[RMDB]
Structure probing data (DMS and 2A3) for a 177-nucleotide construct. For 2A3, 858 sequencing reads were counted. Conditions: 150 mM KOAc, 10 mM MgCl2 and 150 mM bicine (pH 8.5), 24 C.
RNA sequence: GGGAACGACUCGAGUAGAGUCGAAAACAGUAAACGUAGCAACAGUGGUGAUUAACAGCCUGAUAGGGUGCUGCAGAGGCCCACUGUAUUGCUACUAAAGGUCUCUGCAGACGAUGAAAGACAUCGAAUUUUACGCGCAGUUCGCUGCGCGUAAAAUAAAAGAAACAACAACAACAAC
Reactivity to DMS in 0.01 (KOAc 150mM, MgCl2 10mM, bicine 150mM(pH8.5), 24C), signal-to-noise 1, nucleotides 027 to 126: c060a160g010u110a030a010a170c300g000u030a030g000c000a030a000c090a030g040u000g010g060u060g020a060u070u010a040a100c280a020g000c020c000u010g020a150u040a160g000g000g010u040g000c000u000g010c000a060g070a000g000g010c080c000c040a110c000u020g000u020a010u000u000g010c000u010a000c000u020a010a010a190g000g000u000c010u020c000u000g000c000a010g000a110c050g000a020u000g000a060a080a160g000a130c020a010u000c000g040a120
Reactivity to 2A3 in 0.01 (KOAc 150mM, MgCl2 10mM, bicine 150mM(pH8.5), 24C), signal-to-noise 1, nucleotides 027 to 126: c000a000g020u270a020a130a090c120g000u000a000g000c010a000a000c030a000g000u030g070g000u240g060a080u100u300a080a000c000a000g030c000c000u080g000a110u210a130g040g080g000u090g000c000u000g000c010a000g000a000g030g010c000c000c160a000c000u070g000u000a110u010u040g080c000u010a020c000u000a000a000a000g110g000u000c000u060c040u000g000c000a010g000a050c020g000a000u070g070a000a100a000g090a000c000a030u000c000g000a010